RNA sequence: GGGAACGACUCGAGUAGAGUCGAAAAAUACACUGCACGUGCGUGCGAGCAGUUUUCCAAAUAAUCGUACGUACGUAAAGACCCAACUCUACUCGAUGCGAGGGUCAGCAAAGUCGUUCCCAUAUAAUAAUGAUAGGUACUUCGGUACCUAUCAUUAAAAAGAAACAACAACAACAAC
Reactivity to DMS in 0.01 (KOAc 150mM, MgCl2 10mM, bicine 150mM(pH8.5), 24C), signal-to-noise 3, nucleotides 027 to 126: a060u010a110c130a100c090u000g030c280a030c010g020u000g000c000g000u000g000c010g010a000g000c230a140g030u010u000u000u030c200c220a050a070a030u000a070a150u000c000g020u000a000c030g020u000a010c000g000u010a020a160a050g030a080c050c040c020a090a050c010u000c000u000a000c000u000c010g010a130u010g000c010g010a140g000g000g010u000c070a240g000c020a090a200a030g010u000c000g000u000u000c000c010c000a030u000a010u010a100a110
Reactivity to 2A3 in 0.01 (KOAc 150mM, MgCl2 10mM, bicine 150mM(pH8.5), 24C), signal-to-noise 2, nucleotides 027 to 126: a000u180a030c080a020c120u110g050c080a000c020g010u010g000c000g000u000g000c010g000a010g000c120a030g010u020u000u150u140c080c010a030a100a020u140a030a040u010c000g000u010a000c010g010u010a010c000g010u000a010a030a010g010a010c020c010c010a000a030c000u000c000u010a000c000u000c010g010a010u030g000c020g020a130g040g020g050u030c000a020g030c020a130a280a020g000u000c000g000u000u000c000c010c000a000u000a000u000a000a000

An RNA of 177 nucleotides, treated with DMS and 2A3 and read out base by base. For 2A3, 3,394 sequencing reads were counted. Values cover nucleotides 27 to 126. The data come from the RNA Mapping Database (RMDB), library M2PK90. The reactions ran in a buffer of 150 mM KOAc, 10 mM MgCl2 and 150 mM bicine (pH 8.5), at 24 C.